[RMDB]
RNA sequence: GGGAACGACUCGAGUAGAGUCGAAAAGUAGGUCGGUCCUUGGCCAUGCUGCAGCACUAAGCCAUUUCUGCCCGGUGGAUGUACCUCCGGAAGUGGACGUUCGCUGCUAGGUACAGCCAUAAGGGUACAGACAUCACACGUUCGCGUGUGAUGUCUGAAAAGAAACAACAACAACAAC
Reactivity to DMS in 0.01 (KOAc 150mM, MgCl2 10mM, bicine 150mM(pH8.5), 24C), signal-to-noise 2, nucleotides 027 to 126: g010u000a070g010g010u000c000g000g000u000c010c010u010u000g000g010c010c030a090u000g020c030u000g010c020a050g000c050a160c090u000a190a100g010c050c030a080u000u010u000c090u010g000c080c030c010g000g040u000g000g010a100u000g010u010a020c000c000u010c230c060g020g000a060a030g030u000g000g000a100c150g000u010u000c120g000c010u000g010c040u000a020g030g010u000a030c050a030g020c000c030a020u010a110a150g030g010g000u000a140
Reactivity to 2A3 in 0.01 (KOAc 150mM, MgCl2 10mM, bicine 150mM(pH8.5), 24C), signal-to-noise 1, nucleotides 027 to 126: g160u130a020g090g040u010c030g000g020u000c000c020u010u050g020g010c010c010a020u100g000c020u030g020c000a020g030c010a010c020u050a080a050g040c000c020a070u030u030u050c050u070g040c000c020c000g010g020u020g010g030a040u070g040u120a090c000c000u040c070c030g020g000a010a010g020u060g040g010a130c090g050u100u100c050g040c010u050g000c040u020a020g020g020u000a010c010a000g000c000c000a020u050a090a170g020g000g000u070a060
Annotation
The record gives the reactivity of an RNA of 177 nucleotides to DMS and 2A3. As a SHAPE reagent, 2A3 marks flexible, mostly unpaired nucleotides at the ribose 2'-OH. The RNA was probed in 150 mM KOAc, 10 mM MgCl2 and 150 mM bicine (pH 8.5) at 24 C. The 2A3 profile rests on 2,079 reads.